Structure probing data (2A3 and DMS) for a 177-nucleotide construct. The 2A3 profile rests on 26,319 reads. Conditions: 150 mM KOAc, 10 mM MgCl2 and 150 mM bicine (pH 8.5), 24 C. 2A3 is a SHAPE reagent: it acylates the 2'-hydroxyl of flexible nucleotides of all four kinds. The data come from the RNA Mapping Database (RMDB), library M2PK50.
RNA sequence: GGGAACGACUCGAGUAGAGUCGAAAAAGCUCCUGUUUCGACAGGAGCUGUGUGGCUGCCCUUUUGUGCUCGAUGUAGAGUGGUUUCCUGCCGGAAAGGGCUUGAGAGCUUGAUUCGUCAAGCUCAACAUAGUUUAGGGAUUCGUCCCUAAACUAUGAAAAGAAACAACAACAACAAC
Reactivity to 2A3 in 0.01 (KOAc 150mM, MgCl2 10mM, bicine 150mM(pH8.5), 24C), signal-to-noise 9, nucleotides 027 to 126: a010g000c000u000c000c000u000g010u020u070u050c200g100a010c000a010g000g000a000g000c000u000g000u020g010u020g020g020c070u080g020c020c000c000u000u020u010u050g140u070g010c010u010c030g140a180u270g100u290a080g010a000g010u040g020g000u030u060u030c000c000u010g010c000c010g010g010a040a020a010g020g010g000c000u040u100g120a080g000a000g030c010u010u000g000a010u040u090c180g040u010c110a000a000g000c000u000c000a000a010
Reactivity to DMS in 0.01 (KOAc 150mM, MgCl2 10mM, bicine 150mM(pH8.5), 24C), signal-to-noise 9, nucleotides 027 to 126: a010g010c000u000c000c000u000g000u000u000u010c160g010a030c000a010g000g000a010g020c000u000g000u010g020u000g010g000c030u000g010c010c010c010u000u000u000u000g020u010g010c010u000c010g010a180u010g010u010a130g010a020g010u000g020g010u000u000u000c000c000u000g020c010c010g010g000a020a030a040g010g010g010c020u000u010g000a170g010a020g010c000u000u000g000a030u000u010c190g010u000c000a010a010g000c000u000c000a050a160